[RMDB]
RNA sequence: GGGAACGACUCGAGUAGAGUCGAAAAUCUUUGGUGUCAUUCCUUGUGUGUUUUACUUAUGUGAGUGAGCUGAAUCUUUUCUUAAAAAUGGAAUGCUCACCUUUUGUAUUGCCAAUGGCUGGAGAAAGAUUUAGGCUAGUUUCGACUAGCCUAAAUCAAAAGAAACAACAACAACAAC
Reactivity to DMS in 0.01 (KOAc 150mM, MgCl2 10mM, bicine 150mM(pH8.5), 24C), signal-to-noise 3, nucleotides 027 to 126: u000c030u000u000u010g010g020u000g000u020c030a050u000u010c010c040u000u000g030u000g010u010g020u000u000u000u000a040c060u000u000a030u020g020u010g000a070g050u000g010a020g000c000u020g000a150a110u020c050u050u000u000u030c110u020u030a000a040a090a040a020u030g000g030a060a130u020g000c090u000c000a020c020c000u000u000u000u000g010u000a040u010u020g010c020c030a120a050u030g000g040c040u010g000g000a130g010a130a060a090
Reactivity to 2A3 in 0.01 (KOAc 150mM, MgCl2 10mM, bicine 150mM(pH8.5), 24C), signal-to-noise 8, nucleotides 027 to 126: u010c020u050u040u040g070g000u070g060u050c020a050u040u070c050c020u120u050g070u020g000u000g030u080u050u070u040a040c010u070u090a070u200g170u040g060a130g020u010g000a010g000c030u030g100a130a120u150c030u090u120u060u070c100u090u270a110a120a030a030a050u120g030g020a070a020u090g000c010u000c000a010c000c000u030u040u020u040g010u000a030u000u060g020c010c020a100a100u130g050g000c020u040g020g020a040g060a060a110a020
This 177-nucleotide RNA was probed chemically with DMS and 2A3. The 2A3 profile rests on 6,780 reads. It was measured as part of the RMDB library OK1LIB.